[RMDB]
RNA sequence: GGGAACGACUCGAGUAGAGUCGAAAAGUAUCACCACCGUAUCUCAUUAUUCUCCACUAAAUGUGUUAGUAAUGUGAUCUGUUAACAUAAAAAAAGUUUGACUUCACAAAAGCAGCUGGAAACGGACUCAUGGUUGGUUCUUCGGAACCAACCAUGAAAAAGAAACAACAACAACAAC
Reactivity to 2A3 in 0.01 (KOAc 150mM, MgCl2 10mM, bicine 150mM(pH8.5), 24C), signal-to-noise 1, nucleotides 027 to 126: g040u010a240u120c050a050c020c000a060c030c030g080u020a060u000c000u000c000a000u000u120a040u080u060c010u050c040c040a000c000u140a100a120a020u250g000u000g060u050u000a060g000u010a000a090u050g040u000g020a050u000c050u080g010u010u020a240a040c070a020u300a020a130a000a000a000a000a080g000u060u020u100g000a000c000u000u020c260a000c060a020a240a000a000g000c000a000g010c010u010g010g180a150a000a000c000g040g000a010c000